Overview: Source: RMDB library TTRINS, as collected in RNAgym. Chemical mapping of a 177-nucleotide RNA with DMS.
[RMDB]
RNA sequence: GGGAACGACUCGAGUAGAGUCGAAAAGAUAUGGACGUGAUACCUUACCCAUGCAGGCUUUGAUCAUAUUGUGUCGGAAACGACACUAUGGGAGCCUGUCAUGGGUAAGGUAUCACGUCCUAAGUCAGAAUAAUAGAGGGUUCGCCCUCUAUUAUUCAAAAGAAACAACAACAACAAC
Reactivity to DMS in 0.01 (KOAc 150mM, MgCl2 10mM, bicine 150mM(pH8.5), 24C), signal-to-noise 2, nucleotides 027 to 126: g010a070u000a300u000g000g000a010c010g030u000g010a010u000a000c010c000u010u000a010c020c000c000a010u000g010c010a010g010g030c010u000u000u010g020a120u010c010a010u000a020u030u020g040u010g020u000c000g020g020a140a100a290c010g010a020c000a010c000u000a000u000g000g020g000a010g000c000c010u000g010u010c010a000u010g000g000g010u000a000a000g020g000u000a000u000c000a000c000g000u010c010c000u010a000a060g010u010c060a190